The data come from the RNA Mapping Database (RMDB), library M2PK50. An RNA of 177 nucleotides, treated with 2A3 and DMS and read out base by base. As a SHAPE reagent, 2A3 marks flexible, mostly unpaired nucleotides at the ribose 2'-OH. Reactivities are given for positions 27 through 126. The RNA was probed in 150 mM KOAc, 10 mM MgCl2 and 150 mM bicine (pH 8.5) at 24 C.
RNA sequence: GGGAACGACUCGAGUAGAGUCGAAAAGCUGAAAGCUUCGGCUUUCAGCAAAGAAAAAGAUGUACAGCUUCUAAGGUACUUCAAGAAUAGAAGCGAAAAGAAAAAGCUUAACGUUCGCGUUAAGCAAGCUUAAAAGAACGUUCGCGUUCUUUUAAGCAAAAGAAACAACAACAACAAC
Reactivity to 2A3 in 0.01 (KOAc 150mM, MgCl2 10mM, bicine 150mM(pH8.5), 24C), signal-to-noise 3, nucleotides 027 to 126: g020c000u000g010a000a010a020g010c000u050u090c170g130g010c000u000u000u000c000a000g010c000a000a040a000g030a000a110a010a020a000g110a060u220g040u170a080c060a080g000c010u030u020c020u030a050a100g140g020u060a190c010u110u180c070a060a040g020a140a050u030a020g000a020a000g000c050g030a050a090a020a000g110a020a100a020a010a000g010c000u000u010a020a000c010g030u030u070c260g000c000g040u010u000a000a000g000c000a000a000
Reactivity to DMS in 0.01 (KOAc 150mM, MgCl2 10mM, bicine 150mM(pH8.5), 24C), signal-to-noise 3, nucleotides 027 to 126: g000c000u000g010a000a020a000g000c000u000u010c270g020g000c000u000u000u000c000a000g030c000a010a020a090g000a030a090a120a120a120g000a080u010g020u000a070c130a200g000c010u000u010c010u010a060a090g010g020u000a060c080u000u000c120a110a120g020a140a150u000a020g000a010a000g000c010g000a090a040a050a110g010a040a040a050a150a120g000c010u000u000a000a000c000g040u000u020c180g020c010g010u000u000a010a020g010c010a020a060